[RMDB]
RNA sequence: GGGAACGACUCGAGUAGAGUCGAAAACCAGACUUUGUCUGGCCAGAAUUCGUCCAAGGCUCCUCAACCUCAGGCCAGGAAAGCUGGCCCUUCGAAACCCAAGUCGUCGUCGACGCCUUCGCAGAGGGCGUUAGAUAAAGUUCGCUUUAUCUAACGCAAAAGAAACAACAACAACAAC
Reactivity to DMS in 0.01 (KOAc 150mM, MgCl2 10mM, bicine 150mM(pH8.5), 24C), signal-to-noise 7, nucleotides 027 to 126: c010c000a040g010a070c030u030u030u020g000u010c010u000g000g020c030c040a080g000a120a110u030u010c080g010u010c030c040a090a120g000g010c020u000c020c020u000c060a100a160c050c030u000c060a100g010g010c020c010a000g000g010a080a060a100g000c020u020g000g000c010c010c050u010u030c050g010a080a110a090c050c010c020a090a090g010u010c040g010u010c030g010u010c060g010a070c070g010c030c010u000u000c030g000c090a080g010a090g010g000
Reactivity to 2A3 in 0.01 (KOAc 150mM, MgCl2 10mM, bicine 150mM(pH8.5), 24C), signal-to-noise 9, nucleotides 027 to 126: c010c000a010g050a070c080u150u100u240g040u030c010u010g000g010c010c000a050g060a070a130u150u100c050g040u020c060c020a060a030g030g000c020u020c020c010u060c030a050a070c010c010u030c060a050g020g000c010c000a030g010g050a120a070a030g170c000u010g000g000c000c010c000u070u050c030g080a110a060a060c010c000c010a040a020g040u040c030g010u010c020g050u030c030g020a020c010g030c000c000u060u060c050g010c070a030g010a060g080g070

This 177-nucleotide RNA was probed chemically with DMS and 2A3. Conditions: 150 mM KOAc, 10 mM MgCl2 and 150 mM bicine (pH 8.5), 24 C. It was measured as part of the RMDB library OK1LIB. Reactivities are given for positions 27 through 126. Values are in units of 0.01, from 0 to 300, in steps of 10.